RNA sequence: GGGAACGACUCGAGUAGAGUCGAAAAGUAGCGGCUGUUUUCACGGCGUUCUUCUCGAAUAGCUGCCAGUCGCUCAGGAUUAAUCGUUAAGCCAAACAACUUAUGCUGAAAGGGCUUCAGCGCCGCACAGAUAAGGAACAUUCGUGUUCCUUAUCUGAAAAGAAACAACAACAACAAC
Reactivity to 2A3 in 0.01 (KOAc 150mM, MgCl2 10mM, bicine 150mM(pH8.5), 24C), signal-to-noise 9, nucleotides 027 to 126: g080u100a010g010c010g040g000c020u040g080u100u140u220u300c140a070c050g020g000c010g020u010u000c010u200u050c070u060c090g010a020a010u050a140g000c010u020g020c020c000a010g000u000c000g000c010u000c000a010g040g020a090u130u250a110a060u180c040g050u050u070a030a000g010c020c000a100a090a080c020a060a060c050u180u170a100u300g010c020u020g040a080a040a090g110g030g000c000u030u020c030a010g000c000g030c030c020g050c010a050
Reactivity to DMS in 0.01 (KOAc 150mM, MgCl2 10mM, bicine 150mM(pH8.5), 24C), signal-to-noise 9, nucleotides 027 to 126: g020u010a020g030c010g010g010c010u000g010u010u010u010u010c230a240c050g020g020c010g020u000u000c010u010u010c210u010c180g000a030a030u000a080g040c010u000g020c280c020a030g010u000c020g020c010u000c030a120g010g010a100u000u010a080a100u010c080g010u000u000a040a060g010c030c030a060a100a180c080a050a070c060u000u010a090u010g030c010u000g000a050a090a120g000g010g000c030u000u000c100a040g000c020g000c090c050g000c170a210